[RMDB]
RNA sequence: GGGAACGACUCGAGUAGAGUCGAAAACUGGUGUUUCCCACCUGGGAUGUGGGGGGGCUCCCCAAAGGGAGUGUUGUCCUGCCAACUGGGGCCUGCUGUCCCACUGCCCUGCCCCGCUCUGAAGCACAUGACAUCUCAAAUUCGUUUGAGAUGUCAUAAAAGAAACAACAACAACAAC
Reactivity to DMS in 0.01 (KOAc 150mM, MgCl2 10mM, bicine 150mM(pH8.5), 24C), signal-to-noise 6, nucleotides 027 to 126: c110u000g010g010u010g010u000u000u000c010c030c010a230c130c070u000g000g000g010a180u000g010u000g020g020g010g000g000g000g010c010u000c000c000c000c060a020a110a290g010g010g000a030g020u000g010u020u010g010u010c140c030u000g010c060c030a040a170c240u000g000g000g010g010c300c130u000g000c040u000g000u000c000c000c010a070c040u000g010c010c010c010u000g000c040c010c010c060g000c100u000c070u010g010a100a080g010c080a090c180
Reactivity to 2A3 in 0.01 (KOAc 150mM, MgCl2 10mM, bicine 150mM(pH8.5), 24C), signal-to-noise 3, nucleotides 027 to 126: c020u050g070g010u040g030u050u060u030c020c000c000a030c020c030u030g030g000g020a040u050g030u030g010g000g010g010g040g020g020c010u010c000c040c000c010a020a060a080g050g000g000a040g000u140g080u070u080g040u080c000c010u030g110c020c010a030a030c100u020g000g010g030g000c010c040u050g000c030u120g300u150c010c010c010a000c010u050g040c000c000c010u020g000c030c010c000c030g020c030u040c050u130g090a100a020g020c040a060c000
This 177-nucleotide RNA was probed chemically with DMS and 2A3.
For 2A3 the reverse transcriptase was SuperScript II with manganese.
The reactions ran in a buffer of 150 mM KOAc, 10 mM MgCl2 and 150 mM bicine (pH 8.5), at 24 C.
For 2A3, 4,362 sequencing reads were counted.
It was measured as part of the RMDB library OK2TRN.